RNA sequence: GGGAACGACUCGAGUAGAGUCGAAAAGGGCGAUACCGGGCCCGAUACCGGAAUUAGUAGUUUUCUACGAGAGGCCCAAUCUGCGGCCGAAUGCAGUGUAGGUCGAAUCGAGGACCGAGACUCGAUAAUUACGUCGAUAGAUGGACGAUUCCAUCAAAAAUCGGUGAUUAUUCGUAAUCACCGAUUUAAAAGAAACAACAACAACAAC
Reactivity to 2A3 in 0.01 (KOAc 150mM, MgCl2 10mM, bicine 150mM(pH8.5), 24C), signal-to-noise 1, nucleotides 027 to 156: g000g000g000c000g000a010u020a120c000c000g000g000g040c010c000c040g050a030u030a020c000c000g050g150a150a060u110u110a020g030u000a010g030u070u040u170u000c040u040a040c050g020a050g000a080g090g000c010c010c000a000a040u060c040u030g030c040g050g060c040c090g000a060a010u180g020c010a000g050u000g010u120a020g020g030u000c030g060a020a040u000c020g010a020g000g100a030c050c120g070a010g020a040c000u000c000g010a010u070a080a060u150u130a000c100g000u020c010g050a050u070a240g000a000u000g020g000a000c030g040a070u150u000c000c000a010u000c000a040a030
Reactivity to DMS in 0.01 (KOAc 150mM, MgCl2 10mM, bicine 150mM(pH8.5), 24C), signal-to-noise 2, nucleotides 027 to 156: g000g010g030c040g040a220u010a040c040c020g070g010g000c000c030c070g000a060u000a110c050c020g010g000a090a050u000u000a090g000u000a060g010u000u000u000u000c040u010a050c020g010a140g010a110g000g010c010c020c000a090a120u000c030u010g000c010g010g020c040c180g010a070a040u000g000c000a110g040u000g020u010a080g070g000u000c000g010a150a100u010c020g020a130g060g010a200c050c040g010a120g000a070c020u000c010g030a040u000a040a080u000u000a110c100g020u000c030g030a140u000a090g010a020u000g010g010a150c120g010a250u000u010c000c010a000u000c010a030a040